[RMDB]
RNA sequence: GGGAACGACUCGAGUAGAGUCGAAAAAUGAAUUGAUUCGUCAAUUCAUGACCGCUAGCGAGCCGAAAGGCAUUUUAUGCGUACGCUGGCGAAAGCCUAAAAAUCAUCGUGUCUUCGGACACGAUAACUCUUAUAAGUAGUUCGCUACUUAUAAGAGAAAAGAAACAACAACAACAAC
Reactivity to DMS in 0.01 (KOAc 150mM, MgCl2 10mM, bicine 150mM(pH8.5), 24C), signal-to-noise 9, nucleotides 027 to 126: a010u000g000a010a000u000u000g010a020u000u010c180g020u000c000a000a000u000u000c000a010u000g010a120c140c010g010c000u000a020g010c010g010a210g010c020c020g000a100a090a140g010g020c030a090u010u010u010u010a070u010g020c160g010u010a150c030g010c010u000g000g000c000g010a050a040a120g010c000c010u010a010a050a060a080a080u010c150a030u000c000g020u000g010u000c000u000u010c200g020g000a010c000a000c000g000a000u000a030a090
Reactivity to 2A3 in 0.01 (KOAc 150mM, MgCl2 10mM, bicine 150mM(pH8.5), 24C), signal-to-noise 9, nucleotides 027 to 126: a000u010g000a000a000u010u000g010a010u040u040c110g060u010c090a000a000u000u010c000a000u010g030a040c040c010g000c010u000a000g000c010g040a020g010c000c030g090a100a040a010g060g010c010a010u030u100u020u070a130u130g060c020g020u060a050c020g000c000u010g010g000c010g020a080a020a010g080c010c010u110a120a110a030a010a040u180c070a010u000c010g000u000g000u000c010u020u050c230g090g000a000c000a000c000g000a000u000a000a000
Record summary
Conditions: 150 mM KOAc, 10 mM MgCl2 and 150 mM bicine (pH 8.5), 24 C. Structure probing data (DMS and 2A3) for a 177-nucleotide construct. As a SHAPE reagent, 2A3 marks flexible, mostly unpaired nucleotides at the ribose 2'-OH. DMS adducts were read by reverse transcription with MarathonRT. For DMS, 19,999 sequencing reads were counted.